[RMDB]
RNA sequence: GGGAACGACUCGAGUAGAGUCGAAAAGCCUCCUCGCGUCCAUAGAAAGGGGACGGGGCAGAUCGCAAGUGCUACAACCGAGCGGUGGUAUCUGUCAAACUAAGCAGCCACUGCACAUCAAUUGACUAAACGAUGCCGAUCUUCGGAUCGGCAUCAACUUAAGACUUGACUUCGGUCAAGUCUUAAGAAAAGAAACAACAACAACAAC
Reactivity to 2A3 in 0.01 (KOAc 150mM, MgCl2 10mM, bicine 150mM(pH8.5), 24C), signal-to-noise 1, nucleotides 027 to 156: g020c000c010u070c010c050u100c020g060c040g020u030c020c070a030u030a270g210a030a150a020g100g000g020g020a000c000g010g020g010g060c020a000g000a000u020c010g000c040a000a050g010u010g000c010u070a110c010a110a040c000c060g120a000g020c000g020g000u040g000g000u010a000u000c020u000g020u030c080a070a040a180c080u080a100a000g000c000a000g010c000c020a010c000u020g030c030a010c100a050u260c130a140a250u110u170g040a100c110u080a050a150a000c160g000a000u000g020c000c020g000a000u040c000u020u040c240g130g000a030u010c090g010g000c000a000u010c000a000a000
Reactivity to DMS in 0.01 (KOAc 150mM, MgCl2 10mM, bicine 150mM(pH8.5), 24C), signal-to-noise 1, nucleotides 027 to 156: g020c010c000u000c000c000u080c020g020c040g000u020c000c040a100u010a180g010a050a170a140g030g020g040g070a050c040g000g000g000g000c070a030g010a100u000c070g020c070a100a050g030u000g030c020u000a120c010a140a260c110c060g050a210g040c000g000g020u050g020g030u000a090u000c090u000g000u000c030a100a030a240c130u000a110a180g020c010a130g020c020c030a030c010u020g020c010a100c070a080u000c080a040a140u020u000g010a090c110u000a030a050a130c140g000a020u020g000c000c000g020a010u010c000u000u010c270g030g000a000u000c020g020g000c000a000u010c000a000a110